[RMDB]
RNA sequence: GGGAACGACUCGAGUAGAGUCGAAAAGAUGAGAAUACGUGACUUGGUCAGAGGCGGAAAGGCACAAGCACGAACGAUACAGUAGAGUAUCGAACCGCCAACAGAUGCACGUUGUGAUCGUGCUAGAAAUGCGCUCAUAUUUCGAUAUGAGCGCAUUAAAAGAAACAACAACAACAAC
Reactivity to DMS in 0.01 (KOAc 150mM, MgCl2 10mM, bicine 150mM(pH8.5), 24C), signal-to-noise 4, nucleotides 027 to 126: g000a130u000g010a130g000a070a070u030a110c020g010u000g000a070c030u020u000g000g000u000c070a140g000a190g020g060c000g000g000a070a130a160g000g020c050a110c040a020a030g000c020a010c000g030a080a190c020g000a000u000a000c010a200g000u020a070g010a110g010u000a020u000c010g010a100a150c010c040g020c020c010a100a180c180a080g000a110u040g020c000a020c050g010u000u000g010u040g010a110u020c030g020u000g000c000u000a050g010a090
Reactivity to 2A3 in 0.01 (KOAc 150mM, MgCl2 10mM, bicine 150mM(pH8.5), 24C), signal-to-noise 5, nucleotides 027 to 126: g080a080u200g050a020g010a140a130u080a180c000g040u030g080a160c010u000u000g020g020u070c030a030g030a060g100g000c040g000g030a110a050a050g040g000c010a020c030a110a010g010c000a010c070g060a070a010c030g000a020u010a020c000a040g300u240a050g120a040g110u010a040u040c000g000a020a040c000c000g000c000c020a010a000c030a050g080a080u140g010c000a000c040g010u030u100g100u040g040a080u160c010g000u010g000c000u040a050g110a040